This 207-nucleotide RNA was probed chemically with 2A3 and DMS. High 2A3 reactivity points to a flexible backbone, as in loops and unpaired stretches. Values cover nucleotides 27 to 156. For DMS, 8,147 sequencing reads were counted. It was measured as part of the RMDB library M2RFPK.
RNA sequence: GGGAACGACUCGAGUAGAGUCGAAAAGGAGAGUCCCGCUCCUUCAGGUGAACGAUCUCGGUUGUUUCUCUGAAGGCAUGAUCACCCCGUCUGAUGCGGAAGUUCGUGCUUCCGUCGAACGCGAAAGUAAAACCCUAAAGCUUCGGCUUUAGGGUAAUCUUUAAGUUUACUUCGGUAAACUUAAAGAAAAAGAAACAACAACAACAAC
Reactivity to 2A3 in 0.01 (KOAc 150mM, MgCl2 10mM, bicine 150mM(pH8.5), 24C), signal-to-noise 3, nucleotides 027 to 156: g050g000a030g010a030g070u030c000c010c020g050c040u030c010c020u000u020c010a040g050g030u060g070a050a000c030g010a020u000c020u070c170g150g020u000u020g000u010u090u020c010u000c000u010g010a000a000g010g000c000a050u090g040a050u090c010a090c010c010c010c000g030u030c030u100g080a150u190g040c010g000g030a000a000g030u150u270c180g090u300g030c000u010u000c020c000g010u010c010g030a050a000c050g020c040g080a060a020a020g100u100a020a080a080a060c000c000c010u000a000a010a000g010c000u050u110c160g060g010c000u000u030u010a000g000g000g000u000a000a000
Reactivity to DMS in 0.01 (KOAc 150mM, MgCl2 10mM, bicine 150mM(pH8.5), 24C), signal-to-noise 1, nucleotides 027 to 156: g020g010a100g000a110g000u000c020c040c040g000c060u000c010c010u000u000c040a040g020g010u000g010a050a030c020g010a040u010c020u010c230g020g010u000u000g010u000u010u000c030u020c010u010g010a050a040g010g000c070a040u000g010a110u000c060a190c020c000c000c010g000u000c020u010g020a130u010g020c020g010g000a030a240g020u000u000c220g040u010g000c010u000u000c030c000g030u010c040g010a050a060c070g010c070g010a120a060a130g020u000a040a050a050a140c000c000c000u000a010a020a030g010c000u000u000c300g070g020c000u000u000u000a010g010g010g000u010a010a000